This 207-nucleotide RNA was probed chemically with 2A3. For 2A3 the reverse transcriptase was SuperScript II with manganese. The RNA was probed in 150 mM KOAc, 10 mM MgCl2 and 150 mM bicine (pH 8.5) at 24 C.

[RMDB]
RNA sequence: GGGAACGACUCGAGUAGAGUCGAAAAUGUAAGGAAAUGUGAUUCACAUUAUGAGCGCCUAUUUGUUGAUCAGUCUUUGAAUUGUGUUACUCUUCUCGGAUGUAGCAUAUUCCUAUUGCUGGUCUAAAGCUGGCUUUGGGACUACUGCUUUCCUUCAGAAAAUCGUCCUAUUCGUAGGACGAUUUUCAAAAGAAACAACAACAACAAC
Reactivity to 2A3 in 0.01 (KOAc 150mM, MgCl2 10mM, bicine 150mM(pH8.5), 24C), signal-to-noise 2, nucleotides 027 to 156: u140g000u050a040a010g040g030a010a050a010u080g020u020g120a230u170u210c040a030c000a110u050u120a140u300g120a020g080c010g010c000c000u050a130u120u060u120g080u030u050g020a020u030c000a000g120u040c080u050u090u090g070a090a080u070u110g060u020g000u020u010a020c020u020c000u230u030c060u070c070g030g020a060u130g030u040a000g000c010a010u010a010u030u020c010c020u030a040u020u030g000c010u000g010g000u060c020u020a000a120a000g040c020u020g000g000c000u020u040u030g040g000g020a010c020u060a030c050u070g000c000u060u020u010c020c000u070u070c040a000